[RMDB]
RNA sequence: GGGAACGACUCGAGUAGAGUCGAAAAUUACAGGCAUGAGCCACUGCGCCCGGCUGAGUGUACUAGUAGUUAAGAGAAUAAACUAGAUCUAGAAUCAGAGCUGGAUUCAAUUCCUGUCCUUCACAUUUACUAGCUGUGCAACCUUGGGCACAUAACAUCCAUUUAGCUACUUCGGUAGCUAAAUGGAAAAAGAAACAACAACAACAAC
Reactivity to DMS in 0.01 (KOAc 150mM, MgCl2 10mM, bicine 150mM(pH8.5), 24C), signal-to-noise 1, nucleotides 027 to 156: u000u000a090c020a150g000g020c040a050u000g020a300g020c000c020a100c080u010g020c110g030c020c000c020g040g000c000u010g020a170g010u010g040u010a140c010u000a060g040u000a050g050u000u010a180a120g020a080g000a080a090u000a090a080a050c030u000a030g020a050u020c020u000a050g030a090a130u030c110a120g010a160g080c000u010g000g010a030u010u000c070a040a100u000u000c000c040u000g030u000c020c020u000u000c030a090c120a080u000u000u000a020c000u000a050g000c050u010g020u020g000c010a060a060c050c050u000u000g010g000g030c020a070c030a060u000a040a090c090a200
Reactivity to 2A3 in 0.01 (KOAc 150mM, MgCl2 10mM, bicine 150mM(pH8.5), 24C), signal-to-noise 2, nucleotides 027 to 156: u110u060a020c010a010g040g010c010a010u090g030a030g010c000c000a030c060u030g060c020g020c000c020c010g020g020c040u040g040a050g080u090g000u040a070c020u010a000g020u020a010g000u040u100a120a010g090a010g010a130a080u110a080a100a020c040u060a050g020a130u000c040u060a040g050a090a020u110c040a040g010a010g120c040u060g000g020a070u090u050c030a050a090u080u040c030c010u030g030u020c000c000u050u060c050a000c010a050u030u010u070a080c030u040a010g030c040u030g000u040g070c030a080a050c010c040u050u090g020g020g000c020a020c000a020u090a040a000c010a050